[RMDB]
RNA sequence: GGGAACGACUCGAGUAGAGUCGAAAAUGAUCUGAUCACGUACUCAGAUCUGGCCGCGCAUGGCCGACGAGGCCCUGGCCGGCCUCACGAUCCGACUGAUCGGCCUAGGCCUAGAUGGCCGUACGAGUCAUCCGCUGUGGUUCGCCACAGCGGAUGAAAAAGAAACAACAACAACAAC
Reactivity to DMS in 0.01 (KOAc 150mM, MgCl2 10mM, bicine 150mM(pH8.5), 24C), signal-to-noise 2, nucleotides 027 to 126: u030g000a030u000c010u030g010a020u000c110a130c190g030u010a060c160u000c010a010g000a000u010c010u000g010g000c020c000g010c160g000c070a050u000g020g020c030c000g000a060c120g000a100g010g080c010c000c130u000g000g000c070c040g000g040c040c000u000c070a040c060g020a100u020c110c080g020a140c200u000g010a040u000c030g010g000c020c000u000a220g010g010c000c000u000a050g000a060u000g000g000c040c010g040u000a030c090g000a180g020
Reactivity to 2A3 in 0.01 (KOAc 150mM, MgCl2 10mM, bicine 150mM(pH8.5), 24C), signal-to-noise 1, nucleotides 027 to 126: u130g000a000u000c000u000g000a000u040c070a030c300g110u140a080c050u000c000a010g000a000u020c000u010g050g040c000c010g070c030g000c030a050u050g000g000c010c000g000a020c050g070a010g000g000c030c000c000u020g020g000c000c030g000g040c020c070u020c000a030c030g070a100u080c080c000g070a170c100u080g000a130u050c010g000g020c010c000u080a080g000g020c000c000u050a080g030a210u140g000g000c040c000g000u020a030c030g030a030g090
The data come from the RNA Mapping Database (RMDB), library OK2TRN. An RNA of 177 nucleotides, treated with DMS and 2A3 and read out base by base. DMS adducts were read by reverse transcription with MarathonRT.